This 207-nucleotide RNA was probed chemically with 2A3. The RNA was probed in 150 mM KOAc, 10 mM MgCl2 and 150 mM bicine (pH 8.5) at 24 C. It was measured as part of the RMDB library ARCHII. For 2A3, 820 sequencing reads were counted.

[RMDB]
RNA sequence: GGGAACGACUCGAGUAGAGUCGAAAAUAUUUAUCAACGUUUGAGACUACCUCAUACCAUAUCUUCGUACUUCAUUACUAGAUAUACGUAGGUAGAUUUAGUGCGGAAGUAACGAACAGGGUACUGCGUGAGGCCGGUUACGGAGCAACGAAAACCUUCUAACUGGUGUGUUCGCACACCAGUUAGAAAAAGAAACAACAACAACAAC
Reactivity to 2A3 in 0.01 (KOAc 150mM, MgCl2 10mM, bicine 150mM(pH8.5), 24C), signal-to-noise 2, nucleotides 027 to 156: u130a070u040u260u090a090u100c050a100a130c040g000u000u090u280g070a060g020a020c000u000a000c010c000u050c010a000u030a040c010c000a000u030a070u040c110u070u010c040g000u010a000c010u000u000c020a020u010u040a000c000u020a000g020a010u010a000u030a090c050g130u170a070g300g000u000a020g010a020u000u040u010a000g000u000g020c070g030g010a000a010g010u020a240a230c030g010a040a020c020a180g090g010g000u040a010c120u090g100c030g030u020g020a030g050g040c120c090g050g030u050u020a090c080g070g020a020g080c030a030a030c030g080a000a010a060a080c000c000u020